[RMDB]
RNA sequence: GGGAACGACUCGAGUAGAGUCGAAAAGCAGUGUGUUUAUGUGUGUGUGUCCAGCAGGUGGUGUGUAGCAGGCUGUGUAUGUAUCAGGCAGUGUGUGUGUGCGCAGCGGGUAGUUUGCAGGGGUGUACAGCAAGCAGUGUGCAUGGUAUGUACAGCAUCUGUAAAAGGAAUUCGUUCCUUUUACAGAAAAAGAAACAACAACAACAAC
Reactivity to 2A3 in 0.01 (KOAc 150mM, MgCl2 10mM, bicine 150mM(pH8.5), 24C), signal-to-noise 5, nucleotides 027 to 156: g050c060a030g010u030g000u010g020u100u090u050a120u050g040u020g000u000g010u010g020u000g020u010c040c030a030g010c030a020g040g050u040g020g000u020g020u010g000u040a020g020c040a030g050g000c020u020g030u020g010u060a050u090g060u010a060u100c060a020g060g010c040a070g020u010g010u000g000u010g010u000g010u020g080c050g000c020a010g030c020g010g020g010u040a060g020u020u070u080g020c030a020g040g000g000g000u040g010u040a050c030a020g020c020a050a060g000c020a030g040u030g010u020g080c020a020u020g020g030u080a050u110g040u030a030c020a040g040c010a060
Reactivity to DMS in 0.01 (KOAc 150mM, MgCl2 10mM, bicine 150mM(pH8.5), 24C), signal-to-noise 4, nucleotides 027 to 156: g040c050a070g020u000g020u000g020u000u000u000a050u020g030u000g030u010g030u010g020u010g010u000c030c040a150g000c070a090g010g030u000g020g020u000g020u000g030u000a100g030c070a080g000g020c020u020g000u000g040u010a050u000g010u000a090u000c050a110g010g010c040a110g050u010g020u000g030u000g020u000g020u000g020c070g010c020a100g020c060g020g020g010u000a060g020u010u000u000g020c030a100g000g030g030g030u000g020u000a040c050a070g020c030a040a090g030c040a110g010u010g020u000g020c040a080u010g020g000u000a170u000g010u000a070c050a080g020c080a140